An RNA of 207 nucleotides, treated with 2A3 and read out base by base. The RNA was probed in 150 mM KOAc, 10 mM MgCl2 and 150 mM bicine (pH 8.5) at 24 C.
[RMDB]
RNA sequence: GGGAACGACUCGAGUAGAGUCGAAAAGGCCGGGGAUUCUUAAUUUCAGAAAUGAGCUUUGAUUCUGCACAUACAAAGCAGACAGUCGCACAGAGCGGUCAGGACUCACUCCCUUUCACUCUAAGGUGGUUGCUUUAAGAGUCUGGGGGCCAGAAUCGUAGUCGUCUUAAUUCGUUAAGACGACUACAAAAGAAACAACAACAACAAC
Reactivity to 2A3 in 0.01 (KOAc 150mM, MgCl2 10mM, bicine 150mM(pH8.5), 24C), signal-to-noise 1, nucleotides 027 to 156: g050g000c090c060g080g000g000g070a000u080u000c010u030u090a200a230u040u260u160c100a050g050a030a090a030u090g000a100g000c050u110u060u100g040a050u090u060c010u140g040c060a160c030a050u300a060c040a070a170a000g000c000a000g000a010c000a030g040u030c000g030c030a050c030a080g000a010g030c000g040g040u030c010a000g000g010a030c050u000c080a060c080u060c010c050c000u020u080u080c000a000c000u030c050u050a010a110g010g000u010g020g060u120u030g000c030u010u010u010a070a000g010a000g000u000c030u040g040g000g060g000g300c000c090a110g110a140a050u220c070